[RMDB]
Chemical mapping of a 177-nucleotide RNA with DMS and 2A3. For 2A3 the reverse transcriptase was SuperScript II with manganese.

RNA sequence: GGGAACGACUCGAGUAGAGUCGAAAAUCAUCUAUGUUCGCAUAGAUGAACACAGCCUUGUUGUUUUAGUGGACUUUAGGCUAAAGAAUUUCACUAGAAAAAUAAUCGGGUGUUUCGACACCCGAAACUAGGUUACAAGAUUCGUCUUGUAACCUAGAAAAGAAACAACAACAACAAC
Reactivity to DMS in 0.01 (KOAc 150mM, MgCl2 10mM, bicine 150mM(pH8.5), 24C), signal-to-noise 3, nucleotides 027 to 126: u000c000a010u000c000u010a000u010g000u000u010c200g020c010a010u000a000g000a020u000g000a020a060c190a070c220a220g000c040c010u000u010g010u000u000g010u010u000u010u000a020g030u000g000g000a030c040u000u000u000a080g010g000c150u020a050a090a110g000a110a060u000u000u010c000a010c010u000a030g010a020a080a060a060a060u000a080a140u000c020g000g000g030u000g000u000u000u000c130g010a040c000a000c000c000c000g000a000a020a090
Reactivity to 2A3 in 0.01 (KOAc 150mM, MgCl2 10mM, bicine 150mM(pH8.5), 24C), signal-to-noise 2, nucleotides 027 to 126: u010c030a000u000c010u000a000u010g020u020u090c170g030c150a010u010a010g020a010u000g000a020a010c090a020c010a030g120c000c000u090u040g080u040u050g070u000u080u000u050a020g000u010g020g010a010c000u100u080u050a190g200g070c070u150a090a110a100g060a080a120u000u030u060c020a000c020u030a050g120a040a120a020a020a020u140a030a070u030c010g000g030g000u020g080u020u060u100c110g010a000c000a000c000c000c000g000a000a000a000